[RMDB]
RNA sequence: GGGAACGACUCGAGUAGAGUCGAAAAGAUAUGGAAUCGAGUGGACAUGCGUAUUAGGUCGGAAACGACCUUAUACGCAACAGCCACCGAUUCCUAAGUCAAAAGCCCUUGGCUUCGGCCAAGGGCACAUAGAGCACUAGUUCGCUAGUGCUCUAUGAAAAGAAACAACAACAACAAC
Reactivity to 2A3 in 0.01 (KOAc 150mM, MgCl2 10mM, bicine 150mM(pH8.5), 24C), signal-to-noise 6, nucleotides 027 to 126: g000a010u020a010u090g000g000a000a000u010c020g020a120g080u020g020g020a070c200a300u300g000c000g000u010a000u010u050a010g000g000u010c000g010g010a020a010a010c000g000a000c000c000u000u000a000u000a000c010g010c010a010a010c020a010g010c000c000a000c000c000g000a000u010u000c000c000u000a000a000g010u000c010a020a030a110a190g000c010c000c000u000u000g020g000c020u090u090c300g140g000c000c000a000a010g000g000g030c000a000
Reactivity to DMS in 0.01 (KOAc 150mM, MgCl2 10mM, bicine 150mM(pH8.5), 24C), signal-to-noise 6, nucleotides 027 to 126: g000a010u000a060u010g010g000a010a000u000c000g000a170g020u010g000g000a010c030a300u020g020c000g020u010a000u000u000a000g020g010u000c000g020g000a020a010a040c000g010a000c000c000u000u000a000u000a000c010g030c000a050a020c220a110g000c010c000a010c000c000g000a010u000u000c000c000u010a000a050g000u010c010a110a090a230a150g010c000c000c000u010u000g000g010c000u000u020c290g030g010c000c000a010a010g010g010g030c000a000